[RMDB]
RNA sequence: GGGAACGACUCGAGUAGAGUCGAAAACAAUGAUAGGAUAAUGCGCAUAGAGCUUUCUGAAAAACCGGCGCAUAAGGGCAACAACCAGAAGCUUAGGAGGCAAGACUUUUCGAAGGGAGACAAGGAUCGGGUCCGAUUCGUGGAAGUCUUUAGUGAACCAUACGGUUGGAUUCGUCCAACCGUAUGGAAAAGAAACAACAACAACAAC
Reactivity to 2A3 in 0.01 (KOAc 150mM, MgCl2 10mM, bicine 150mM(pH8.5), 24C), signal-to-noise 1, nucleotides 027 to 156: c020a010a140u130g010a090u090a120g110g000a040u090a120a030u090g000c010g010c030a030u060a200g090a050g030c000u020u250u020c140u110g070a070a100a030a060a030c040c070g050g020c010g000c010a000u050a080a000g070g010g000c000a130a070c080a060a020c180c040a040g050a030a010g040c030u030u050a020g020g020a020g010g040c010a010a000g030a090c010u000u060u040u150c110g070a060a020g020g010g000a140g000a040c090a060a070g020g000a050u120c070g030g000g060u010c050c000g070a090u020u020c020g000u000g040g020a010a010g030u000c000u100u080u050a150g010u100g040a060a070
About this RNA: An RNA of 207 nucleotides, treated with 2A3 and read out base by base. The RNA was probed in 150 mM KOAc, 10 mM MgCl2 and 150 mM bicine (pH 8.5) at 24 C. Values are in units of 0.01, from 0 to 300, in steps of 10. The 2A3 profile rests on 496 reads.